[RMDB]
RNA sequence: GGGAACGACUCGAGUAGAGUCGAAAACGCAGACGAUGAUUGCAAUAAUUUAUUUAGAAGCUGACAUUAUUUACAAAAUCGUUUAAGCUUUUUACAGCUGCAUCACUACGUAGACCUUCUCGGUAUAUAUCCGUUCUAAUUUUUUCCCAAAAAUGUACGACGAUACGUAUUUCGAUACGUAUCGUCGAAAAGAAACAACAACAACAAC
Reactivity to 2A3 in 0.01 (KOAc 150mM, MgCl2 10mM, bicine 150mM(pH8.5), 24C), signal-to-noise 1, nucleotides 027 to 156: c050g000c030a030g030a050c080g000a010u020g000a030u000u110g010c040a050a050u160a050a070u180u110u210a230u150u170u050a090g030a070a000g000c040u050g010a020c020a030u000u120a110u060u220u260a140c120a090a180a040a080u060c080g010u020u040u090a060a020g000c000u040u050u000u010u010a080c100a120g050c020u030g000c030a010u040c000a030c020u060a030c040g060u010a000g000a010c010c000u020u020c010u000c030g000g120u050a070u010a010u010a030u120c060c020g020u020u030c040u030a020a040u000u080u090u070u050u090c050c000c000a140a010a020a030a030u050g050u090a020

The record gives the reactivity of an RNA of 207 nucleotides to 2A3.
2A3 adducts were read by reverse transcription with SuperScript II with manganese.
The RNA was probed in 150 mM KOAc, 10 mM MgCl2 and 150 mM bicine (pH 8.5) at 24 C.